The record gives the reactivity of an RNA of 207 nucleotides to 2A3. The RNA was probed in 150 mM KOAc, 10 mM MgCl2 and 150 mM bicine (pH 8.5) at 24 C. For 2A3 the reverse transcriptase was SuperScript II with manganese. Source: RMDB library OK3TST, as collected in RNAgym.
RNA sequence: GGGAACGACUCGAGUAGAGUCGAAAAUAUGUUUUGGGAAUAAUAACUGCUUACUAAAACUCUAGUUACGCCAAACUUUCUUUAAACAUUUUUGGUGAGAGUAAUGGUGGAGAAAGAGGCAAAAUCCAUUUAAUUCACCUGGUCACUUAUACACGCACGUCUUAUGGACGUUCGCGUCCAUAAGACGAAAAGAAACAACAACAACAAC
Reactivity to 2A3 in 0.01 (KOAc 150mM, MgCl2 10mM, bicine 150mM(pH8.5), 24C), signal-to-noise 1, nucleotides 027 to 156: u180a040u060g030u040u010u010u030g040g000g030a070a070u080a130a020u050a130a130c140u040g100c060u040u220a060c040u110a040a090a220a060c040u060c050u050a030g040u030u020a020c090g050c030c000a010a030a040c000u040u120u120c050u010u140u160a070a050a030c040a090u060u060u060u060u060g080g000u040g000a080g000a000g030u040a040a120u170g030g000u030g020g010a010g090a010a080a020g090a000g060g000c170a030a000a000a020u080c000c040a020u010u160u110a070a110u040u000c010a020c000c000u030g030g010u030c020a020c090u040u140a080u030a190c060a000c050g060c000a010